[RMDB]
Source: RMDB library RSTRND, as collected in RNAgym. Chemical mapping of a 207-nucleotide RNA with 2A3. Reactivities are given for positions 27 through 156. The reactions ran in a buffer of 150 mM KOAc, 10 mM MgCl2 and 150 mM bicine (pH 8.5), at 24 C.
RNA sequence: GGGAACGACUCGAGUAGAGUCGAAAAGCUGCUUAGUCAGCCUGCGUGAUCCAAAGAUGGAUUGCUCGUGUCUAUCUACGGGUCUUACCAUUUAACGAGCUACGUUUAACUACUUACCUUAAUAGUUAGAAAUAAGAUUCUUAGGUUAGUUUUGAUACUAGGGACAAUUGUUCGCAAUUGUCCCUAGAAAAGAAACAACAACAACAAC
Reactivity to 2A3 in 0.01 (KOAc 150mM, MgCl2 10mM, bicine 150mM(pH8.5), 24C), signal-to-noise 2, nucleotides 027 to 156: g000c000u010g010c030u120u140a060g130u300c000a000g000c010c010u080g040c080g220u240g000a030u010c010c010a030a070a000g020a020u010g040g000a000u000u120g010c000u010c000g000u030g000u000c000u000a010u000c010u020a020c110g010g000g000u000c010u020u090a050c010c000a140u140u160u190a000a000c000g000a000g000c000u030a000c050g030u030u000u060a020a020c000u010a010c000u110u070a070c020c020u070u090a030a050u040a080g030u020u010a030g030a010a040a050u070a050a030g070a180u200u160c090u130u220a030g060g000u040u030a040g000u000u060u030u040g110a120u140a120